[RMDB]
RNA sequence: GGGAACGACUCGAGUAGAGUCGAAAAAGCUGCCAGCACUAAGCCGGACGGCGCCCUCGCACCAGUUCCGCUGUGGGUUCGCCUACAAGAACGUACGGUGUUGAGGCCCUGUCCGCCGCUGCGCUGCCACCUACUCUCGCCGCGCUAGUCGAGCGGAGUCCCAUUCACUGUUCGCAGUGAAUGGGACAAAAGAAACAACAACAACAAC
Reactivity to 2A3 in 0.01 (KOAc 150mM, MgCl2 10mM, bicine 150mM(pH8.5), 24C), signal-to-noise 2, nucleotides 027 to 156: a000g020c020u040g000c040c000a010g000c010a050c100u210a080a030g070c050c020g010g000a010c000g010g040c060g010c060c040c000u000c000g000c000a000c000c000a000g020u000u000c000c000g010c040u000g000u000g000g000g010u020u050c220g050c030c020u020a010c000a050a110g000a030a010c010g050u190a050c070g000g000u020g000u070u300g000a010g000g000c000c010c000u050g000u000c020c000g000c010c000g000c000u000g010c020g030c030u020g000c000c020a040c010c000u020a110c020u020c020u060c080g040c010c000g030c010g060c130u130a030g060u180c030g040a030g000c000g020g010a040